[RMDB]
RNA sequence: GGGAACGACUCGAGUAGAGUCGAAAACUUAUUAUGAUCUUGUACCUUCUGACCCAUCAGUUGAAGAAAUGAGAAAAGUUGUUUGUGAACAGAAGUUAAGGCCAAAUAUCCCAAACAGAUGGCAGAGAAGUUUACGUAUUUUCGAAUACGUAAACUUAAAAGAAACAACAACAACAAC
Reactivity to DMS in 0.01 (KOAc 150mM, MgCl2 10mM, bicine 150mM(pH8.5), 24C), signal-to-noise 6, nucleotides 027 to 126: c060u030u010a060u020u040a090u010g000a100u010c020u010u010g020u010a080c140c020u000u000c000u020g020a080c050c030c050a080u030c070a080g030u000u010g030a090a070g000a070a100a060u030g010a120g000a060a080a120a080g000u000u000g000u010u000u020g030u010g010a070a090c090a050g010a050a060g000u010u010a050a080g010g000c020c030a010a050a120u020a050u010c000c000c000a060a050a070c130a080g000a120u000g000g020c060a060g010a110g010
Reactivity to 2A3 in 0.01 (KOAc 150mM, MgCl2 10mM, bicine 150mM(pH8.5), 24C), signal-to-noise 2, nucleotides 027 to 126: c030u030u030a000u200u130a170u280g100a080u020c030u020u000g050u120a080c000c000u060u120c100u060g040a040c000c010c000a150u090c030a040g010u050u110g030a140a030g040a070a190a090u150g000a050g050a010a060a060a030g010u030u020g090u040u130u090g080u140g010a020a000c020a120g090a160a000g070u000u140a020a000g090g000c000c010a000a130a000u100a040u060c000c000c000a000a090a000c000a000g070a000u020g000g030c040a000g000a000g060